Structure probing data (DMS and 2A3) for a 207-nucleotide construct.
Reactivities are given for positions 27 through 156.
RNA sequence: GGGAACGACUCGAGUAGAGUCGAAAACAGUGCCCAGCUUGGCCCAGCAGGUUGGUUGAAAAGUCUUGAUCCACAGGCUUUCCUACUGGGAUAGACUGAAGGAAGAUGAGUGAGUGUGUGAGUGAGAGAAGAAAUUCAUGAGUGGCAAGGGGCAGGAGACUUGAAAGUUGUUCGCAACUUUCAAGUCAAAAGAAACAACAACAACAAC
Reactivity to DMS in 0.01 (KOAc 150mM, MgCl2 10mM, bicine 150mM(pH8.5), 24C), signal-to-noise 2, nucleotides 027 to 156: c080a170g020u010g020c020c010c010a090g030c040u010u000g040g000c020c000c020a100g030c010a040g000g040u000u000g030g030u000u000g010a090a060a160a130g020u000c020u000u010g010a230u000c050c060a160c120a120g010g010c040u000u000u000c000c000u000a110c090u010g030g030g020a080u010a010g010a060c020u020g010a110a070g000g030a090a100g010a040u010g000a070g040u010g020a130g010u010g030u010g030u000g000a190g060u000g010a140g020a110g000a070a080g020a040a050a180u000u000c060a050u000g020a050g020u000g000g000c010a060a060g000g010g020g020c030a070g000g000a210
Reactivity to 2A3 in 0.01 (KOAc 150mM, MgCl2 10mM, bicine 150mM(pH8.5), 24C), signal-to-noise 2, nucleotides 027 to 156: c060a080g050u050g040c010c010c010a020g020c000u030u030g030g040c000c020c000a010g000c020a010g000g030u040u060g020g030u080u140g100a070a050a020a010g010u000c010u050u080g060a090u090c070c040a080c030a140g010g010c000u050u000u010c010c000u040a120c060u030g010g030g000a000u030a020g010a030c050u040g040a060a040g070g000a020a040g030a050u060g020a030g030u050g010a010g030u030g010u010g010u040g070a040g030u060g030a030g030a000g030a090a010g020a040a070a000u090u080c060a070u090g020a020g040u050g000g000c050a070a050g050g000g000g040c020a040g000g030a080